[RMDB]
RNA sequence: GGGAACGACUCGAGUAGAGUCGAAAAAGCAAAUGCCAGUACGAUGGCGACAGGCGCGACUCUUCCCAUAGUUUAUCCCUUUUAAAUAUCACCGCUUGUUGCCCCGAACGUCGUGGCGUUCGGGGCUGACAACUUGAACGUUCGCGUUCAAGUUGUCAAAAGAAACAACAACAACAAC
Reactivity to 2A3 in 0.01 (KOAc 150mM, MgCl2 10mM, bicine 150mM(pH8.5), 24C), signal-to-noise 1, nucleotides 027 to 126: a000g110c080a060a090a060u080g000c000c000a050g090u180a210c170g150a060u070g000g000c040g020a030c120a050g110g110c010g020c020g020a000c000u000c000u070u040c000c010c000a040u300a090g060u000u060u040a030u110c000c000c000u000u220u060u300a220a110a020u300a170u230c030a030c090c050g060c300u030u130g020u060u020g000c000c000c010c000g000a000a000c000g000u060c040g270u250g170g070c080g000u020u000c000g000g000g050g000c020u060
An RNA of 177 nucleotides, treated with 2A3 and read out base by base. The RNA was probed in 150 mM KOAc, 10 mM MgCl2 and 150 mM bicine (pH 8.5) at 24 C.